Chemical mapping of a 177-nucleotide RNA with 2A3 and DMS. It was measured as part of the RMDB library OK2TRN. Values cover nucleotides 27 to 126. For DMS the reverse transcriptase was MarathonRT. The DMS profile rests on 909 reads. The reactions ran in a buffer of 150 mM KOAc, 10 mM MgCl2 and 150 mM bicine (pH 8.5), at 24 C.
[RMDB]
RNA sequence: GGGAACGACUCGAGUAGAGUCGAAAAAGCGGUGGCUUAGGUUUGAUGCCUUUAAACACCGCUACCGAUAGAGUAGCGAAGCUGCCUGUGGAAGCGGAAGAAGCAGCUGAGGAGGUGGAUGUAGCACGUCACGGAAUUUGUUCGCAAAUUCCGUGACAAAAGAAACAACAACAACAAC
Reactivity to 2A3 in 0.01 (KOAc 150mM, MgCl2 10mM, bicine 150mM(pH8.5), 24C), signal-to-noise 2, nucleotides 027 to 126: a030g080c030g000g040u030g030g060c090u040u030a000g070g080u130u100u300g110a130u300g030c020c060u010u000u050a160a230a000c000a010c010c000g010c000u000a020c000c000g020a030u110a200g110a020g040u220a000g000c030g070a070a020g000c010u020g070c010c060u150g010u020g150g060a080a030g010c030g040g040a070a010g050a070a000g110c080a010g000c020u020g020a030g050g010a000g020g070u000g040g010a090u090g040u110a010g060c040a030c070
Reactivity to DMS in 0.01 (KOAc 150mM, MgCl2 10mM, bicine 150mM(pH8.5), 24C), signal-to-noise 1, nucleotides 027 to 126: a090g050c000g010g000u000g000g030c170u000u000a010g010g050u010u010u010g000a250u000g000c000c030u000u000u000a030a070a140c010a010c050c010g000c000u000a020c030c040g030a050u010a090g020a120g020u000a130g020c030g000a110a100g000c050u000g000c030c000u010g010u000g000g000a130a080g010c070g010g010a100a040g010a150a090g010c040a040g000c040u000g000a250g040g000a040g030g010u000g000g000a040u000g010u000a080g000c110a070c100